[RMDB]
RNA sequence: GGGAACGACUCGAGUAGAGUCGAAAAGGUCAGGCCUGAUCGGAAACAGCAGCAGGUGAGUCCGCCUUAUGUGAAGGAUCGGCUGAAACACGAGGAAAUACUGAGCCGACGCAAGACGGUAGCCGAAAAAAUCUAGUUCACUUCGGUGAACUAGAAAGCCAUUGUAGCUGUUCGCAGCUACAAUGGCAAAAGAAACAACAACAACAAC
Reactivity to 2A3 in 0.01 (KOAc 150mM, MgCl2 10mM, bicine 150mM(pH8.5), 24C), signal-to-noise 1, nucleotides 027 to 156: g080g020u070c050a020g060g000c030c000u120g040a070u050c130g020g070a090a090a010c010a040g050c000a000g000c000a010g030g050u020g040a030g070u040c040c010g060c000c000u130u160a230u080g180u010g190a060a010g080g000a060u060c000g000g000c020u020g000a050a000a030c020a010c030g040a140g050g070a030a140a030u040a200c090u090g040a020g000c000c000g010a010c000g000c010a020a020g000a060c050g010g000u040a020g000c000c030g040a110a000a000a060a000a000u000c000u000a010g000u030u040c000a000c010u030u080c130g090g010u000g000a000a000c000u000a000g000a000a000a000